[RMDB]
RNA sequence: GGGAACGACUCGAGUAGAGUCGAAAAGAUAUGGAGAGUUGAACUACGCUACAGAGUGCCAUCGAUCAAUGUUAGUCGGAAACGACUAACAUUGGGAGGCACUUUGUAGCGCAACUCUCCUAAGUCACUGUUGUAUGAGGUUCGCCUCAUACAACAGAAAAGAAACAACAACAACAAC
Reactivity to 2A3 in 0.01 (KOAc 150mM, MgCl2 10mM, bicine 150mM(pH8.5), 24C), signal-to-noise 2, nucleotides 027 to 126: g020a020u050a010u130g000g010a010g000a020g000u000u020g070a200a080c150u240a100c300g020c010u000a000c010a020g020a000g010u010g000c000c030a260u300c160g230a120u080c030a000a000u040g000u000u000a000g000u000c080g030g040a080a030a090c010g000a020c010u010a000a000c000a010u000u000g000g000g020a240g000g010c000a010c000u010u010u000g000u000a000g000c000g020c010a000a000c000u000c000u000c000c000u010a000a000g000u010c010a000
Reactivity to DMS in 0.01 (KOAc 150mM, MgCl2 10mM, bicine 150mM(pH8.5), 24C), signal-to-noise 2, nucleotides 027 to 126: g020a050u000a300u010g020g000a010g000a020g020u000u000g010a070a100c140u030a300c060g000c010u000a010c000a010g010a010g010u000g010c020c030a290u010c210g010a050u000c000a010a010u010g000u000u010a000g010u000c000g030g000a050a040a170c000g030a020c000u000a010a000c000a000u010u000g010g000g020a040g010g020c000a000c000u000u000u000g020u010a000g000c000g010c010a000a000c000u000c010u010c000c020u000a010a070g020u000c020a240
Structure probing data (2A3 and DMS) for a 177-nucleotide construct. 2A3 adducts were read by reverse transcription with SuperScript II with manganese.